[RMDB]
Structure probing data (2A3) for a 207-nucleotide construct. 2A3 adducts were read by reverse transcription with SuperScript II with manganese. Reactivities are given for positions 27 through 156.
RNA sequence: GGGAACGACUCGAGUAGAGUCGAAAAUGACCUGAAAUAUAGAUUGCUUGUACCAUGGACACUGACAGCAGAGAGAGAGAGAACUCCAUGGGCUGGGUGGACUGGCAGGCUUCCUGGAGGAGGAAGAAUUCAAUUGGGUCUUGAAGGUAAGAUUUAACGUAAUGGCAGGUUUCGACCUGCCAUUACGAAAAGAAACAACAACAACAAC
Reactivity to 2A3 in 0.01 (KOAc 150mM, MgCl2 10mM, bicine 150mM(pH8.5), 24C), signal-to-noise 1, nucleotides 027 to 156: u130g030a040c000c000u040g030a000a100a000u200a040u090a010g090a140u010u130g060c080u070u040g010u150a150c070c000a010u090g010g000a040c030a000c110u180g050a100c010a010g000c040a000g080a000g000a000g020a000g010a000g040a010g160a150a130c000u000c050c000a040u050g000g160g000c050u020g000g000g040u050g000g020a080c040u000g020g000c030a030g000g000c000u010u010c010c030u080g010g010a040g020g000a010g050g000a030a020g040a040a090u050u100c010a050a040u120u080g060g000g000u030c020u040u050g030a040a050g040g000u110a030a000g040a160u110u160u260a020a060
For 2A3, 527 sequencing reads were counted.